The data come from the RNA Mapping Database (RMDB), library OK3TST. The record gives the reactivity of an RNA of 207 nucleotides to DMS and 2A3. The reactions ran in a buffer of 150 mM KOAc, 10 mM MgCl2 and 150 mM bicine (pH 8.5), at 24 C.
[RMDB]
RNA sequence: GGGAACGACUCGAGUAGAGUCGAAAACUAGAGGAAUCCAGGUGAAUGUCCCAGUUCUCCUCAAAGGGGAUACAAGAUGAGUGUGGAGAUGAGGUUAGCCUCAAUUUCUACAGAUGGGCCCAUCUCUCUUAGGCCCCUAAAUCAGCAGGAGUCCUUCCCGAAUUCAUACAUUCGUGUAUGAAUUCGGAAAAGAAACAACAACAACAAC
Reactivity to DMS in 0.01 (KOAc 150mM, MgCl2 10mM, bicine 150mM(pH8.5), 24C), signal-to-noise 2, nucleotides 027 to 156: c040u000a120g020a100g030g030a170a120u000c030c030a100g000g010u000g000a100a090u000g010u010c010c030c040a280g040u000u000c010u000c000c000u000c060a040a170a130g000g040g020g010a300u000a060c080a020a010g000a060u000g020a080g020u040g010u030g000g010a020g010a070u010g010a030g000g040u000u000a160g000c010c010u000c010a020a060u010u000u000c030u000a100c010a150g060a120u000g050g010g000c020c010c010a030u000c020u010c050u000c060u000u020a050g010g000c000c020c000c010u000a010a070a090u000c110a110g030c110a030g000g000a130g020u000c000c010u000u000c010
Reactivity to 2A3 in 0.01 (KOAc 150mM, MgCl2 10mM, bicine 150mM(pH8.5), 24C), signal-to-noise 4, nucleotides 027 to 156: c020u070a050g020a070g080g040a060a050u020c050c030a050g090g020u060g050a100a040u060g030u080c000c000c000a010g010u020u010c020u010c020c010u020c010a110a130a000g010g010g010g000a030u110a220c060a050a030g030a080u230g010a020g070u110g010u060g030g000a040g010a030u020g010a030g000g050u120u200a110g120c000c000u030c000a040a100u040u090u010c020u040a020c020a020g080a210u100g000g030g020c020c020c000a020u020c010u000c010u010c010u020u050a060g060g070c020c000c010c000u060a080a090a040u130c050a050g070c030a010g050g000a000g010u000c030c000u070u040c020
Background: For 2A3, 1,987 sequencing reads were counted. Reactivities are given for positions 27 through 156.